[RMDB]
RNA sequence: GGGAACGACUCGAGUAGAGUCGAAAAGAUAUGCAAGCCAAUCAGCCCGAUCUUGUUUUAAUUUCGGGAGAUUUAACUAAUCUUGCUUUGCCAGAAGAAUUUAAACAAGCCGCAGACUGGUUACAUCCACACCAUAUGCUUUCGAGCAUAUGGUGUGAAAAGAAACAACAACAACAAC
Reactivity to DMS in 0.01 (KOAc 150mM, MgCl2 10mM, bicine 150mM(pH8.5), 24C), signal-to-noise 2, nucleotides 027 to 126: g000a110u000a020u000g000c070a030a100g010c180c100a060a060u000c010a100g020c000c040c000g000a010u000c020u000u010g030u020u000u000u010a010a050u000u000u000c030g010g010g070a130g000a070u010u000u000a040a140c160u010a100a020u010c000u000u000g010c030u000u000u000g000c040c090a110g000a070a100g030a080a060u010u000u000a020a020a080c040a060a070g010c170c140g020c060a070g010a050c030u010g000g000u000u000a050c080a110u020c140
Reactivity to 2A3 in 0.01 (KOAc 150mM, MgCl2 10mM, bicine 150mM(pH8.5), 24C), signal-to-noise 2, nucleotides 027 to 126: g010a030u140a030u190g030c050a000a010g040c050c070a020a040u010c010a060g100c000c000c000g000a020u000c010u040u200g130u220u300u100u180a080a080u020u040u020c000g010g080g000a030g000a000u060u000u120a090a040c050u070a040a080u000c000u000u040g020c000u150u090u080g030c030c020a010g040a100a020g030a060a130u090u190u190a160a090a020c020a020a010g010c000c000g000c040a020g000a040c000u020g040g010u060u040a010c010a030u050c010
Chemical mapping of a 177-nucleotide RNA with DMS and 2A3. The reactions ran in a buffer of 150 mM KOAc, 10 mM MgCl2 and 150 mM bicine (pH 8.5), at 24 C. Reactivities are given for positions 27 through 126. The data come from the RNA Mapping Database (RMDB), library OK2TST.